This 177-nucleotide RNA was probed chemically with DMS. Values cover nucleotides 27 to 126. Source: RMDB library OK2TST, as collected in RNAgym. Conditions: 150 mM KOAc, 10 mM MgCl2 and 150 mM bicine (pH 8.5), 24 C. DMS adducts were read by reverse transcription with MarathonRT.
RNA sequence: GGGAACGACUCGAGUAGAGUCGAAAAAUGGCGAAAACACUACAUGAACUUAUAGAUGACUUCUUUAAAUCGCAAGACAAACAAUUAGUGAUUUAUUUUGCAGAGAAGGUAGAAGUUGAUGAAGCAAUACUAGGGGAGUGUUCGCACUCCCCUAGUAAAAAGAAACAACAACAACAAC
Reactivity to DMS in 0.01 (KOAc 150mM, MgCl2 10mM, bicine 150mM(pH8.5), 24C), signal-to-noise 2, nucleotides 027 to 126: a080u000g000g010c060g000a040a080a120a120c150a070c060u000a060c010a010u010g000a030a060c010u010u000a080u010a140g020a180u010g020a120c010u010u000c020u000u000u010a060a090a140u010c090g000c010a000a010g010a050c050a040a020a060c130a030a200u000u000a140g030u020g000a100u000u000u000a070u000u000u010u000g010c020a080g010a010g000a030a010g010g000u010a070g010a030a030g000u000u000g000a050u000g010a060a030g000c100a030a060